The record gives the reactivity of an RNA of 177 nucleotides to 2A3 and DMS. Reactivities are given for positions 27 through 126. For DMS, 1,221 sequencing reads were counted. Source: RMDB library M2PK90, as collected in RNAgym.
[RMDB]
RNA sequence: GGGAACGACUCGAGUAGAGUCGAAAAACAAAGACACGCUUCGCAGAUGACCUCCUCGUUGGUGCGUGUCGGUAAUGUUGUCAGUCACAGGCAACAGUUAACGAUCUGCGUAAAUAAAAUGAAAAAAGUAUCACUUUCCUUUCGAGGAAAGUGAUACAAAAGAAACAACAACAACAAC
Reactivity to 2A3 in 0.01 (KOAc 150mM, MgCl2 10mM, bicine 150mM(pH8.5), 24C), signal-to-noise 1, nucleotides 027 to 126: a000c050a010a090a000g000a020c000a020c000g030c010u110u140c010g000c010a000g010a040u010g000a000c010c000u000c020c030u090c060g080u100u070g000g010u010g000c000g010u000g000u000c000g000g010u050a050a060u000g000u000u000g010u020c010a070g170u130c080a050c050a190g000g000c000a000a000c000a010g000u010u060a000a000c030g000a000u010c000u000g000c020g000u010a000a000a000u140a010a100a010a090u170g070a100a020a040a000a010a020
Reactivity to DMS in 0.01 (KOAc 150mM, MgCl2 10mM, bicine 150mM(pH8.5), 24C), signal-to-noise 2, nucleotides 027 to 126: a060c100a050a120a070g010a010c020a010c000g030c000u000u000c020g000c030a010g000a000u000g020a020c020c010u020c080c040u000c090g040u000u000g040g010u000g000c000g000u010g010u000c000g010g010u010a080a110u010g000u000u000g010u000c010a090g000u030c190a170c290a080g000g000c010a000a000c010a020g000u000u010a010a010c020g020a010u000c000u000g000c000g000u010a030a040a110u000a030a040a040a060u030g020a000a040a040a070a100a110